Conditions: 150 mM KOAc, 10 mM MgCl2 and 150 mM bicine (pH 8.5), 24 C. This 177-nucleotide RNA was probed chemically with 2A3 and DMS. Reactivities are rounded to 0.1 and cut off at 0 and 3. In probing experiments dimethyl sulfate is read out at A N1 and C N3, which are open when not base-paired. 2A3 adducts were read by reverse transcription with SuperScript II with manganese.
RNA sequence: GGGAACGACUCGAGUAGAGUCGAAAAACGGUCGUACGCGACCGAGCAGAGUUGAUUCGUCCUCUGUCGCGGCAACUGCUGUCAUAGCUCCGUACACUGUCAAUACUUUUGACAGAUGGCGGAGCAAUUAGAUAUUACAUUUCGAUGUAAUAUCUAAAAAAGAAACAACAACAACAAC
Reactivity to 2A3 in 0.01 (KOAc 150mM, MgCl2 10mM, bicine 150mM(pH8.5), 24C), signal-to-noise 9, nucleotides 027 to 126: a000c020g000g010u020c020g010u090a120c080g010c010g030a000c000c010g000a000g000c100a020g020a030g030u180u210g130a180u210u110c040g090u090c050c010u020c030u040g030u030c020g000c010g020g010c030a060a020c020u060g020c020u050g100u140c050a120u080a160g000c000u000c000c000g010u070a160c010a000c020u000g000u000c000a010a040u100a300c140u140u180u020u010g000a000c000a010g030a160u000g000g000c000g000g000a000g000c000a000a000
Reactivity to DMS in 0.01 (KOAc 150mM, MgCl2 10mM, bicine 150mM(pH8.5), 24C), signal-to-noise 9, nucleotides 027 to 126: a170c020g000g010u000c070g020u010a060c080g020c010g010a020c010c060g010a050g010c110a130g010a100g010u010u010g010a180u010u010c040g010u010c170c020u000c020u000g000u000c050g010c010g000g010c040a070a040c030u010g000c050u000g000u010c100a110u020a130g000c000u000c000c000g010u000a100c020a050c010u000g010u000c000a000a010u020a140c290u010u010u000u000g000a010c000a010g010a070u000g000g000c000g000g000a000g010c000a000a010